[RMDB]
Background:
An RNA of 177 nucleotides, treated with DMS and 2A3 and read out base by base. DMS adducts were read by reverse transcription with MarathonRT. The data come from the RNA Mapping Database (RMDB), library OK2TRN. 2A3 is a SHAPE reagent: it acylates the 2'-hydroxyl of flexible nucleotides of all four kinds. The RNA was probed in 150 mM KOAc, 10 mM MgCl2 and 150 mM bicine (pH 8.5) at 24 C.
RNA sequence: GGGAACGACUCGAGUAGAGUCGAAAAUACCUUCUGAUUCACGACGGAGAUCGUGCUGUUGUGACCUAUGAAGGCGAUACUAGUGCAGGCUACAAUCAUGAUGUUUCCAUACUCCGUGCAUGGAUCCUCCCGCACUCAAGUUCGCUUGAGUGCGGGAAAAAGAAACAACAACAACAAC
Reactivity to DMS in 0.01 (KOAc 150mM, MgCl2 10mM, bicine 150mM(pH8.5), 24C), signal-to-noise 1, nucleotides 027 to 126: u000a170c010c010u020u000c040u000g000a170u000u000c000a000c020g010a000c010g010g010a220g050a050u020c290g020u030g010c080u000g010u000u010g060u000g000a040c180c040u000a040u010g010a100a050g010g000c020g020a040u010a050c080u010a050g000u010g000c100a040g040g010c060u000a080c160a050a070u000c090a070u000g000a050u000g000u000u000u000c040c050a070u000a140c060u000c010c050g020u000g000c010a100u000g000g000a090u000c050c180
Reactivity to 2A3 in 0.01 (KOAc 150mM, MgCl2 10mM, bicine 150mM(pH8.5), 24C), signal-to-noise 1, nucleotides 027 to 126: u100a020c020c000u000u050c030u090g050a050u020u020c010a010c040g020a030c000g060g010a040g000a150u180c060g140u290g130c020u000g000u000u020g010u010g010a000c000c000u200a180u150g030a030a050g010g020c010g010a010u030a130c020u030a000g070u050g070c000a020g100g000c000u060a040c020a060a120u080c040a070u030g000a060u040g080u020u110u000c050c010a040u030a090c020u010c060c020g070u060g070c050a010u030g020g080a030u000c010c000
Record summary
The DMS profile rests on 802 reads.